[RMDB]
RNA sequence: GGGAACGACUCGAGUAGAGUCGAAAAAAGGAAAUGUGGAUAGAAAUCCUGCACACACCUGAAACUCAAAAUUCUGAGAAGCUUAGGAUGUUGGGGGGCUUUGGGGCUGCGCAGCUCAGCACUUCAGAGGCAGCUUGCCGUGCCGCCAACCUCUGCACAUGCUAAAUAUAUUCGUAUAUUUAGCAUGAAAAGAAACAACAACAACAAC
Reactivity to DMS in 0.01 (KOAc 150mM, MgCl2 10mM, bicine 150mM(pH8.5), 24C), signal-to-noise 2, nucleotides 027 to 156: a100a060g000g020a040a110a090u000g010u010g010g000a160u000a120g020a140a170a170u000c020c000u010g000c080a080c040a080c040a180c010c020u000g020a090a080a110c030u030c030a050a080a080a060u000u000c120u010g010a090g010a100a050g020c070u000u010a050g020g010a120u000g000u000u010g000g020g000g030g040g010c090u000u030u000g010g000g000g040c070u000g000c020g020c080a050g000c040u000c060a090g020c060a090c080u000u010c070a110g010a150g000g020c060a120g010c050u010u010g020c030c010g040u000g020c020c010g000c020c010a020a020c030c030u000c000u000g030c070a200
Reactivity to 2A3 in 0.01 (KOAc 150mM, MgCl2 10mM, bicine 150mM(pH8.5), 24C), signal-to-noise 2, nucleotides 027 to 156: a000a000g110g010a070a080a010u120g010u030g030g010a010u020a100g100a050a260a010u050c010c010u050g010c040a040c010a000c010a020c050c010u040g040a080a090a050c020u060c060a060a110a100a200u250u050c110u090g050a020g010a160a030g040c040u070u120a020g010g030a060u050g000u050u060g010g010g000g000g000g000c010u060u090u060g000g030g020g000c020u020g010c050g020c020a000g000c000u040c100a020g040c000a040c040u210u220c090a040g040a090g220g000c000a010g000c000u010u130g020c010c000g090u030g000c020c010g050c010c000a010a020c030c000u080c010u050g010c030a000